[RMDB]
The record gives the reactivity of an RNA of 177 nucleotides to 2A3 and DMS.
The DMS profile rests on 839 reads.
It was measured as part of the RMDB library TTRDEL.
RNA sequence: GGGAACGACUCGAGUAGAGUCGAAAAGAUAUGGACCACAUGGAGUUGUUCCUCGUUGAAAUCGGAAACGAUGGAGAGGACAAUGAGGUGUGGUCCUAAGUCAAACCAUAUAGUUCGCUAUAUGGAACCCUUUGUAGCUGUUCGCAGCUACAAAGGGAAAAGAAACAACAACAACAAC
Reactivity to 2A3 in 0.01 (KOAc 150mM, MgCl2 10mM, bicine 150mM(pH8.5), 24C), signal-to-noise 1, nucleotides 027 to 126: g040a000u030a040u140g000g000a000c030c000a000c000a010u010g100g000a090g040u020u030g100u290u180c000c010u000c010g110u230u090g020a030a020a010u020c000g020g000a080a040a030c000g020a010u010g030g000a010g000a000g020g000a000c010a000a010u070g000a030g090g000u030g010u000g010g010u020c000c000u000a000a000g010u000c000a020a050a000c030c000a000u000a010u030a020g070u060u100c300g000c140u000a000u010a010u040g030g060a090a100
Reactivity to DMS in 0.01 (KOAc 150mM, MgCl2 10mM, bicine 150mM(pH8.5), 24C), signal-to-noise 1, nucleotides 027 to 126: g000a030u000a300u000g020g000a010c010c000a020c000a000u010g020g020a300g020u010u000g000u000u000c000c000u000c020g000u000u000g000a090a080a000u010c000g030g000a210a060a170c000g060a010u000g040g000a050g000a000g030g000a020c010a000a000u020g000a300g020g040u000g010u000g000g010u000c000c020u000a000a070g020u000c040a080a040a190c000c000a020u000a000u020a000g000u020u000c210g030c020u000a020u000a000u010g000g020a120a190